[RMDB]
Source: RMDB library OK3TST, as collected in RNAgym.
Structure probing data (2A3) for a 207-nucleotide construct.
Reactivities are rounded to 0.1 and cut off at 0 and 3.
Values cover nucleotides 27 to 156.
The 2A3 profile rests on 554 reads.
Conditions: 150 mM KOAc, 10 mM MgCl2 and 150 mM bicine (pH 8.5), 24 C.
2A3 adducts were read by reverse transcription with SuperScript II with manganese.
RNA sequence: GGGAACGACUCGAGUAGAGUCGAAAAAUGACGUUUUCAAACAUUACUUCAAUAGUAGAGCAAAGCUGAAAACAAAACAAAACAAAACCUUCCAGACAUUGUUUCAGAUUGUCAACCUGAGGGUCCAUAAUGUCAGCUCCUUGGGAGUUCCAGGUAACCUAAUCGGGUGAUUCGUCACCCGAUUAGGAAAAGAAACAACAACAACAAC
Reactivity to 2A3 in 0.01 (KOAc 150mM, MgCl2 10mM, bicine 150mM(pH8.5), 24C), signal-to-noise 1, nucleotides 027 to 156: a010u110g000a010c110g020u000u100u030u000c050a060a130a040c000a080u100u150a040c020u050u100c070a080a160u110a270g010u060a040g010a020g040c070a070a080a050g010c050u020g040a030a000a050a010c040a000a140a040a000c090a030a090a000a010c040a020a140a000a000c000c000u080u020c050c030a030g010a060c020a020u030u080g040u030u050u140c000a010g060a100u060u110g000u070c030a040a040c070c010u060g010a100g020g030g000u010c000c040a070u070a170a040u120g050u060c010a010g010c010u030c000c000u040u000g000g000g040a030g000u110u000c010c000a000g070g010u050a020a010